Structure probing data (2A3 and DMS) for a 207-nucleotide construct. For DMS the reverse transcriptase was MarathonRT. For 2A3 the reverse transcriptase was SuperScript II with manganese.
RNA sequence: GGGAACGACUCGAGUAGAGUCGAAAAUGUCGGCAAGCUCUAUAUAUGGACACUUACGAAGGGUUUUGGUUGUUUUGUAUCUCAAGCCGACUUUGAGUAUUCGAGGAAAAUACGACAGAAAAAACAAAUAGACCGGUAUCCUUCGGGAUACCGGUAACAUACUAUCGGGUUUCGACCCGAUAGUAUGAAAAGAAACAACAACAACAAC
Reactivity to 2A3 in 0.01 (KOAc 150mM, MgCl2 10mM, bicine 150mM(pH8.5), 24C), signal-to-noise 2, nucleotides 027 to 156: u070g030u030c000g000g040c030a000a070g030c040u030c050u070a130u040a060u020a060u300g090g060a010c030a030c100u160u240a130c160g080a100a080g040g010g030u010u020u100u080g010g000u040u020g000u040u090u030u000g040u030a110u110c030u030c070a020a000g000c000c000g000a000c050u040u040u030g000a000g000u020a010u050u080c060g030a130g000g070a080a100a070a020u080a030c050g060a010c080a070g220a030a050a010a010a000a010c020a000a130a030u080a050g080a030c000c000g000g010u000a000u000c000c000u010u040c230g000g000g000a000u000a000c000c000g000g000u000a000a000
Reactivity to DMS in 0.01 (KOAc 150mM, MgCl2 10mM, bicine 150mM(pH8.5), 24C), signal-to-noise 2, nucleotides 027 to 156: u010g010u000c020g020g030c020a130a100g020c040u000c030u010a110u000a160u000a100u030g010g000a130c070a030c040u000u010a060c070g040a130a100g020g040g000u060u010u000u000g040g000u020u000g000u000u000u000u020g000u000a090u000c020u000c050a080a300g070c030c010g010a030c000u010u000u000g000a290g020u000a080u000u000c030g000a120g000g010a090a060a030a070u000a030c000g000a240c050a130g000a010a030a060a090a110a060c050a060a060a090u000a200g010a090c000c000g010g040u010a010u000c010c000u000u010c300g060g040g010a010u000a000c000c000g000g020u010a000a030